[RMDB]
RNA sequence: GGGAACGACUCGAGUAGAGUCGAAAACAUGGAAGAUUCUGUUAUAAAAGAUCAUGUGCAUUGUCACAAUUUGUCAUGCAUCGCGGUCUGAUAAUUUCCACAAUGCAAGCAAUCUUCUCAUGCGUCAUCCACCGCAUUAUUUCGAUAAUGCGGUGGAAAAAGAAACAACAACAACAAC
Reactivity to 2A3 in 0.01 (KOAc 150mM, MgCl2 10mM, bicine 150mM(pH8.5), 24C), signal-to-noise 2, nucleotides 027 to 126: c010a000u010g000g000a000a010g000a020u060u040c010u040g070u050u120a160u140a140a120a050a020g010a000u020c000a000u080g000u000g000c010a010u030u290g030u050c030a000c070a120a180u150u160u180g010u010c010a010u040g000c010a020u090c070g040c080g030g000u000c000u010g020a030u030a160a070u070u030u000c030c010a020c040a060a040u110g030c010a040a070g050c020a030a000u000c000u000u000c060u030c010a030u020g030c010g080u030c050a050
Reactivity to DMS in 0.01 (KOAc 150mM, MgCl2 10mM, bicine 150mM(pH8.5), 24C), signal-to-noise 2, nucleotides 027 to 126: c000a000u000g000g010a010a000g010a030u000u000c050u000g000u000u000a090u000a080a090a110a030g000a010u000c010a080u010g020u000g000c010a020u000u020g010u000c040a030c300a050a140u010u010u010g000u020c030a000u010g000c010a020u020c120g050c080g010g000u010c010u010g000a100u000a020a060u020u010u010c140c150a040c180a060a060u000g000c040a030a050g010c190a020a010u000c000u000u000c000u010c030a010u000g000c100g000u000c220a110
The record gives the reactivity of an RNA of 177 nucleotides to 2A3 and DMS. For 2A3 the reverse transcriptase was SuperScript II with manganese. It was measured as part of the RMDB library OK2TRN. DMS adducts were read by reverse transcription with MarathonRT.